[RMDB]
RNA sequence: GGGAACGACUCGAGUAGAGUCGAAAAGAGCUGUAGUACAGCAAGAAGCACGCGAUCCUUGGCACCGCGUGCAAGAUAAUAAUGCCGGCAAAGAAGGAAAGCCGGCAUAAGUGCCAAGUAAGAGAGAACGCAUAUAGUGAUUCGUCACUAUAUGCGUAAAAGAAACAACAACAACAAC
Reactivity to 2A3 in 0.01 (KOAc 150mM, MgCl2 10mM, bicine 150mM(pH8.5), 24C), signal-to-noise 6, nucleotides 027 to 126: g120a010g000c010u030g000u110a070g080u110a100c010a000g000c020a020a030g140a080a010g030c000a000c000g000c000g020a040u100c050c010u000u000g000g000c000a000c000c000g000c000g000u000g000c000a000a000g020a020u170a130a030u110a120a010u050g000c010c000g000g000c020a100a110a120g130a120a090g180g070a190a100a010g000c000c000g000g000c000a000u000a000a000g000u000g000c000c080a000a000g030u070a060a050g080a010g020a010g010a050
Reactivity to DMS in 0.01 (KOAc 150mM, MgCl2 10mM, bicine 150mM(pH8.5), 24C), signal-to-noise 3, nucleotides 027 to 126: g000a110g010c000u020g000u000a130g010u070a300c000a000g030c010a100a090g000a120a140g010c000a030c000g000c000g020a150u030c060c010u020u010g000g030c000a020c020c060g000c000g020u010g030c020a030a000g010a120u020a060a020u000a030a000u000g030c000c000g000g000c000a080a100a140g060a220a210g020g020a120a170a100g010c000c000g000g020c000a010u000a000a040g010u000g050c000c020a000a000g010u070a060a100g020a150g000a190g020a070
This 177-nucleotide RNA was probed chemically with 2A3 and DMS.
Values are in units of 0.01, from 0 to 300, in steps of 10.
The reactions ran in a buffer of 150 mM KOAc, 10 mM MgCl2 and 150 mM bicine (pH 8.5), at 24 C.
For 2A3, 8,911 sequencing reads were counted.
The DMS profile rests on 4,587 reads.